[RMDB]
RNA sequence: GGGAACGACUCGAGUAGAGUCGAAAAUCUGGGGAUGAAGGGAGAGGGUCAGGUGGAAAGCCUGAUGCAGAGGUCAGCCACUUCCUCAAGGCAGGAAGAUGGACAUAGUGACUGAUGUAGCUUUUAGAACUGCCAAUCUCUGGCUCCAGGAGUGUCACAUAUAUUUAGGAUUCGUCCUAAAUAUAUGAAAAGAAACAACAACAACAAC
Reactivity to DMS in 0.01 (KOAc 150mM, MgCl2 10mM, bicine 150mM(pH8.5), 24C), signal-to-noise 2, nucleotides 027 to 156: u020c030u070g010g030g030g000a070u000g000a060a060g000g020g020a040g020a270g050g020g020u000c010a000g040g020u020g050g000a120a110a130g020c000c080u000g020a070u010g040c040a070g040a300g020g010u000c010a090g030c000c000a060c000u000u000c000c000u000c060a120a100g010g030c090a040g000g000a030a050g000a130u010g020g010a060c130a120u000a120g030u000g000a060c020u010g000a090u000g030u010a050g000c030u050u000u000u000a110g000a040a100c050u000g000c010c040a030a240u000c010u010c010u000g010g000c000u010c020c000a040g010g010a110g030u000g020u000c040a130
Reactivity to 2A3 in 0.01 (KOAc 150mM, MgCl2 10mM, bicine 150mM(pH8.5), 24C), signal-to-noise 4, nucleotides 027 to 156: u040c020u030g020g010g000g020a070u180g120a180a050g120g020g000a020g000a010g030g010g000u030c010a010g020g030u080g080g090a100a040a020g020c010c000u030g010a030u050g000c000a000g010a010g000g000u010c000a000g010c000c010a000c010u010u030c000c010u030c070a160a180g180g020c080a000g000g010a000a010g020a100u020g000g010a050c040a120u250a060g130u060g030a010c010u010g010a020u000g010u020a010g020c000u090u090u080u140a130g050a140a090c060u070g000c000c000a040a040u010c000u000c010u010g030g000c000u010c000c010a000g000g020a020g020u090g090u090c030a010
Chemical mapping of a 207-nucleotide RNA with DMS and 2A3. Conditions: 150 mM KOAc, 10 mM MgCl2 and 150 mM bicine (pH 8.5), 24 C. Values cover nucleotides 27 to 156.